[RMDB]
RNA sequence: GGGAACGACUCGAGUAGAGUCGAAAAUAUUUAGGGCUUCAUUUUAUUUCAAAGAAUUUGCUACCCGCACUUUCACUGCUACCACUGCUGUAGGUAGUUGUAUAAAGAGUGUAGUGCGGCAUCUAGGCUAGACUCUAAUGUUCGCAUUAGAGUCUAGAAAAGAAACAACAACAACAAC
Reactivity to 2A3 in 0.01 (KOAc 150mM, MgCl2 10mM, bicine 150mM(pH8.5), 24C), signal-to-noise 2, nucleotides 027 to 126: u140a040u120u180u100a130g000g060g000c000u060u020c060a060u020u030u110u180a100u060u190u060c050a020a190a060g040a110a100u080u050u130g020c010u070a050c060c010c000g030c010a020c000u060u180u150c030a000c000u040g000c000u020a000c000c050a030c040u140g010c080u120g090u070a060g040g010u000a010g000u010u080g040u000a080u050a030a070a020g170a010g000u000g010u010a000g010u000g010c000g010g000c000a030u020c010u020a000g020g040
Reactivity to DMS in 0.01 (KOAc 150mM, MgCl2 10mM, bicine 150mM(pH8.5), 24C), signal-to-noise 2, nucleotides 027 to 126: u020a030u010u000u000a090g000g010g010c050u010u000c070a030u010u010u000u000a040u000u020u010c100a110a150a080g010a060a070u000u000u020g000c040u000a110c260c010c020g000c000a000c010u010u010u000c020a010c000u010g000c040u000a010c010c010a040c030u010g030c250u010g010u020a040g020g010u000a010g020u000u000g020u000a120u000a050a060a060g000a030g020u000g020u010a000g000u000g020c020g000g050c130a020u000c070u000a040g020g010